[RMDB]
RNA sequence: GGGAACGACUCGAGUAGAGUCGAAAACUGCCCUGGGUUUUCGCUGUCUUUCAGAUAGAUUGUGCCUAAUUUGUUCGUCUCUUAAUUGUACUGAUGUUGUGUUAUAUCUAAGGGCGGAUGGUUAACGCGAUAAGAUAUCAUUCGUGAUAUUUUAUCGAAAAGAAACAACAACAACAAC
Reactivity to DMS in 0.01 (KOAc 150mM, MgCl2 10mM, bicine 150mM(pH8.5), 24C), signal-to-noise 9, nucleotides 027 to 126: c080u010g010c010c010c020u010g000g000g010u000u000u010u000c020g010c010u000g010u040c140u000u000u010c030a040g000a050u010a050g000a070u000u010g010u010g010c030c010u010a050a080u020u020u010g010u000u000c070g010u000c010u010c010u010u010a060a090u020u010g010u010a060c070u000g000a090u000g010u010u010g010u000g000u000u010a030u020a030u010c050u010a080a080g010g000g010c000g010g010a050u010g000g010u010u010a050a080c160g010
Reactivity to 2A3 in 0.01 (KOAc 150mM, MgCl2 10mM, bicine 150mM(pH8.5), 24C), signal-to-noise 9, nucleotides 027 to 126: c050u110g020c000c000c000u030g010g000g000u010u010u010u020c010g000c020u030g070u100c060u030u090u020c020a010g010a030u040a020g040a050u010u060g020u030g020c000c010u040a080a100u050u040u180g020u020u020c010g020u000c040u000c000u120u040a060a070u150u100g050u080a060c030u050g130a170u080g070u220u030g040u020g030u090u120a110u020a030u110c070u030a020a020g010g000g000c010g010g000a020u040g050g040u080u060a110a040c070g010
The record gives the reactivity of an RNA of 177 nucleotides to DMS and 2A3. Reactivities are given for positions 27 through 126. The RNA was probed in 150 mM KOAc, 10 mM MgCl2 and 150 mM bicine (pH 8.5) at 24 C. The DMS profile rests on 57,093 reads.